[RMDB]
RNA sequence: GGGAACGACUCGAGUAGAGUCGAAAAUCGACGGAUAGCGAGCAGCCUCUUUUGCUGCUGACCCGUUUCACAUGAAUUUAUGCUAUCUUACGCGCCAGAAAAUGCCUAUCAGAGAGUCAGUACGAUGGAGUCUUAGUUGGUUCGCCAACUAAGACUCAAAAGAAACAACAACAACAAC
Reactivity to 2A3 in 0.01 (KOAc 150mM, MgCl2 10mM, bicine 150mM(pH8.5), 24C), signal-to-noise 2, nucleotides 027 to 126: u070c000g030a020c040g030g010a010u040a040g060c050g050a000g000c040a010g020c030c000u200c140u030u230u200u250g040c000u000g040c000u000g030a040c030c010c000g030u040u120u110c170a140c030a100u180g080a150a140u190u090u110a070u180g010c040u010a030u060c000u030u060a070c060g030c030g000c020c010a010g140a040a130a010a000u110g050c020c010u090a080u130c020a010g030a030g000a000g110u030c020a030g080u040a040c070g020a070u080g090
Reactivity to DMS in 0.01 (KOAc 150mM, MgCl2 10mM, bicine 150mM(pH8.5), 24C), signal-to-noise 2, nucleotides 027 to 126: u000c090g010a110c130g010g000a060u000a030g000c040g010a020g020c010a040g010c020c300u010c150u010u000u000u000g000c020u000g000c000u000g000a080c060c030c030g000u010u000u000c120a140c150a130u010g020a070a070u020u000u000a070u030g010c020u000a010u010c030u000u000a110c130g010c100g000c040c050a060g010a060a050a060a070u020g000c050c050u020a030u000c080a110g000a100g000a060g000u000c050a070g000u010a040c150g000a140u000g020
Chemical mapping of a 177-nucleotide RNA with 2A3 and DMS.
Values cover nucleotides 27 to 126.
For DMS the reverse transcriptase was MarathonRT.
2A3 is a SHAPE reagent: it acylates the 2'-hydroxyl of flexible nucleotides of all four kinds.
The reactions ran in a buffer of 150 mM KOAc, 10 mM MgCl2 and 150 mM bicine (pH 8.5), at 24 C.
For 2A3 the reverse transcriptase was SuperScript II with manganese.
The 2A3 profile rests on 1,359 reads.